This 207-nucleotide RNA was probed chemically with DMS and 2A3.
[RMDB]
RNA sequence: GGGAACGACUCGAGUAGAGUCGAAAACCAAUGGGAAACCAUUGGCAACUCGGAAACGAGUUGAACGGGGAAUUAGGGCACAAACCCGCGACAAUGCGAUUUUAAGCAUUGUCGAUUACGCCCAUGUCGAUUUUAAGACAUGGAGCGAAGUGCCCAACGUAGGAUCUCCGUUCGCGGAGGUUCUACGAAAAGAAACAACAACAACAAC
Reactivity to DMS in 0.01 (KOAc 150mM, MgCl2 10mM, bicine 150mM(pH8.5), 24C), signal-to-noise 3, nucleotides 027 to 156: c010c000a020a010u000g010g000g000a240a150a220c000c010a020u000u000g000g000c000a030a030c010u020c000g010g000a110a140a250c000g020a020g010u000u010g010a060a150c050g020g020g010g010a170a180u000u000a180g010g000g050c020a020c000a090a140a150c010c010c000g000c010g010a030c000a000a010u010g000c000g000a290u000u000u000u010a130a280g010c000a000u010u000g010u000c000g010a020u000u000a080c000g000c000c000c000a020u000g000u000c000g010a270u000u000u010u000a100a270g000a020c010a000u010g030g010a060g030c000g000a020a070g020u000g000c000c000c000a020a050
Reactivity to 2A3 in 0.01 (KOAc 150mM, MgCl2 10mM, bicine 150mM(pH8.5), 24C), signal-to-noise 6, nucleotides 027 to 156: c000c000a000a000u010g000g000g020a050a040a030c000c000a000u000u000g000g000c000a000a000c000u010c000g020g030a070a060a040c000g000a000g000u000u010g010a060a010c010g000g000g000g030a050a040u150u120a280g060g020g000c010a000c000a010a060a030c000c000c000g000c000g000a000c000a000a000u000g000c020g140a180u050u050u130u300a110a000g000c000a000u000u000g000u000c000g000a000u000u020a020c000g000c000c000c000a000u000g000u000c010g040a120u010u100u100u300a110a020g000a010c010a000u010g000g010a130g010c010g010a040a010g010u000g000c000c010c000a000a000
The reactions ran in a buffer of 150 mM KOAc, 10 mM MgCl2 and 150 mM bicine (pH 8.5), at 24 C. The data come from the RNA Mapping Database (RMDB), library OK3TST. Reactivities are given for positions 27 through 156.